[RMDB]
Notes: This 177-nucleotide RNA was probed chemically with 2A3. For 2A3, 466 sequencing reads were counted. Source: RMDB library RFM100, as collected in RNAgym. The reactions ran in a buffer of 150 mM KOAc, 10 mM MgCl2 and 150 mM bicine (pH 8.5), at 24 C.

RNA sequence: GGGAACGACUCGAGUAGAGUCGAAAAACAACAACAAUAACAAGCAACGACGAAGACAAUAAAAACAACACGUAACGACUCCAGCACAACAAAAACAAAAUCGCGGAGGCGCAGCUAACUGAUUCUUGUGACUGUCUCUUUUCGAAGAGACAGUCACAAAAGAAACAACAACAACAAC
Reactivity to 2A3 in 0.01 (KOAc 150mM, MgCl2 10mM, bicine 150mM(pH8.5), 24C), signal-to-noise 1, nucleotides 027 to 126: a010c000a000a010c090a020a020c000a000a180u160a000a110c160a080a060g030c000a000a060c010g110a030c010g130a010a010g100a080c080a030a090u300a080a000a000a000a000c000a030a030c130a040c140g170u100a140a000c000g080a010c060u000c000c030a000g000c000a010c000a220a080c010a000a140a000a100a000c100a010a020a020a020u040c300g000c000g010g010a010g000g000c000g040c000a000g000c000u010a000a000c110u150g130a110u070u080c000u000u000